[RMDB]
RNA sequence: GGGAACGACUCGAGUAGAGUCGAAAAAGUAUCUGUGCCGGUGAUAAACCAACGUCUAAUCACGAUAAAUAACCCCAUAAACCAAAUGGUAACUCAGCGGGUAGUAACCAGAUUGCAUGCUAUAAGCUCUGUUCUCUAGUUUCGACUAGAGAACAGAAAAAGAAACAACAACAACAAC
Reactivity to 2A3 in 0.01 (KOAc 150mM, MgCl2 10mM, bicine 150mM(pH8.5), 24C), signal-to-noise 2, nucleotides 027 to 126: a000g010u020a020u040c050u070g030u030g040c000c050g050g080u090g030a100u060a070a090a060c020c020a050a080c050g030u000c050u040a040a060u050c030a010c050g010a020u040a090a110a000u080a030a060c010c000c000c000a080u150a070a160a020c040c020a030a050a160u110g000g040u020a030a020c010u020c050a020g090c060g080g030g010u020a030g040u020a040a050c010c000a030g030a060u080u140g050c020a020u080g040c020u100a040u080a300a000g040c010
Reactivity to DMS in 0.01 (KOAc 150mM, MgCl2 10mM, bicine 150mM(pH8.5), 24C), signal-to-noise 2, nucleotides 027 to 126: a130g010u010a040u000c010u000g030u010g010c130c100g010g010u000g000a060u000a050a100a100c030c030a080a090c110g000u000c010u020a070a170u000c090a050c060g000a100u000a040a120a090u010a120a090c090c010c000c040a120u000a050a040a130c130c050a090a080a080u000g000g000u000a080a070c130u000c060a070g020c090g000g010g050u000a040g000u000a080a120c070c020a060g000a100u000u010g030c050a070u000g000c040u050a100u000a080a080g010c120

Source: RMDB library OK2TST, as collected in RNAgym. This 177-nucleotide RNA was probed chemically with 2A3 and DMS. The RNA was probed in 150 mM KOAc, 10 mM MgCl2 and 150 mM bicine (pH 8.5) at 24 C.